[RMDB]
RNA sequence: GGGAACGACUCGAGUAGAGUCGAAAAAGAUGUUUGCCUCCAAAAAGAAUCCAACAUGGGCAUGUGGAAGGGACGAUCGUUGGAAGAUCAUCAACGCAAAACACCCGGGUUUGACUUGCAGCCGUUCUCUGCCUCCAUUAUUCGUAAUGGAGGCAGAAAAAGAAACAACAACAACAAC
Reactivity to DMS in 0.01 (KOAc 150mM, MgCl2 10mM, bicine 150mM(pH8.5), 24C), signal-to-noise 2, nucleotides 027 to 126: a080g000a080u020g010u000u000u000g000c020c040u010c080c050a050a080a100a130a100g010a060a170u000c060c040a020a040c060a060u000g000g000g010c070a090u000g010u000g000g000a100a110g010g030g040a010c140g040a050u000c070g000u020u000g000g010a070a100g010a060u000c140a050u000c020a070a060c090g000c070a050a040a100a120c130a060c060c040c020g000g010g040u000u000u000g000a060c030u000u000g020c040a030g000c000c020g000u000u000c040